[RMDB]
RNA sequence: GGGAACGACUCGAGUAGAGUCGAAAAACAGCGUGGAAUUAUAUGACCAAUGAUUCCGCUGAUGCUGCACCUGAGGAGACGUAUGUACAUCUGCCCCCCCCCGACAAACCAGGGUGGUUAUCAUACAACUUGAGUUCAUCUUCGGAUGAACUCAAGUAAAAGAAACAACAACAACAAC
Reactivity to DMS in 0.01 (KOAc 150mM, MgCl2 10mM, bicine 150mM(pH8.5), 24C), signal-to-noise 1, nucleotides 027 to 126: a120c030a050g010c050g000u000g020g000a030a000u000u030a040u020a050u020g010a100c170c170a120a080u000g010a010u000u000c000c000g000c070u000g000a130u020g030c030u000g000c080a090c000c010u010g010a110g010g020a100g000a050c070g000u010a030u020g010u000a040c060a030u000c020u000g000c010c010c000c000c000c070c000c010c050g010a040c090a050a060a070c090c090a110g020g040g010u000g000g010u010u000a070u010c080a090u000a110c140a080

This 177-nucleotide RNA was probed chemically with DMS. In probing experiments dimethyl sulfate is read out at A N1 and C N3, which are open when not base-paired. The RNA was probed in 150 mM KOAc, 10 mM MgCl2 and 150 mM bicine (pH 8.5) at 24 C.